Record summary: An RNA of 177 nucleotides, treated with DMS and 2A3 and read out base by base. The DMS profile rests on 1,627 reads. It was measured as part of the RMDB library OK2TST. The RNA was probed in 150 mM KOAc, 10 mM MgCl2 and 150 mM bicine (pH 8.5) at 24 C. High DMS reactivity at an A or C suggests that its Watson-Crick edge is free. For 2A3, 1,023 sequencing reads were counted.

RNA sequence: GGGAACGACUCGAGUAGAGUCGAAAAUGUGAUUGAGCAUGACUGGAUCGUGAUGAUGCUGUCAUGAAGAGAGCAUCAGAUGCUUGUUGAUGUCGCAUUCGUGACAUCUGAUAUUGAUGGUGAUGAAAGUACGCACGGGAUUCGUCCCGUGCGUACUAAAAGAAACAACAACAACAAC
Reactivity to DMS in 0.01 (KOAc 150mM, MgCl2 10mM, bicine 150mM(pH8.5), 24C), signal-to-noise 2, nucleotides 027 to 126: u010g020u000g010a150u020u010g010a200g010c020a030u000g010a040c010u010g000g000a020u000c040g000u000g000a230u030g030a000u000g040c020u010g010u010c000a040u000g000a060a220g010a180g000a140g010c010a030u010c070a030g000a210u020g020c110u000u000g030u000u000g010a010u010g000u000c000g020c020a260u010u010c210g020u010g000a030c010a000u000c030u010g010a090u000a020u010u000g030a080u010g000g020u000g010a050u000g030a150a080
Reactivity to 2A3 in 0.01 (KOAc 150mM, MgCl2 10mM, bicine 150mM(pH8.5), 24C), signal-to-noise 1, nucleotides 027 to 126: u120g070u050g040a090u070u110g010a030g090c010a030u030g050a050c010u040g020g050a010u010c010g070u120g100a160u120g000a000u030g090c030u010g070u020c010a040u020g010a090a000g020a020g010a000g110c010a000u040c000a000g020a150u060g050c000u020u070g130u060u110g000a000u000g030u000c000g050c010a050u150u090c170g010u000g010a000c000a000u010c020u070g060a030u000a100u250u080g040a080u000g060g150u050g030a040u110g000a110a030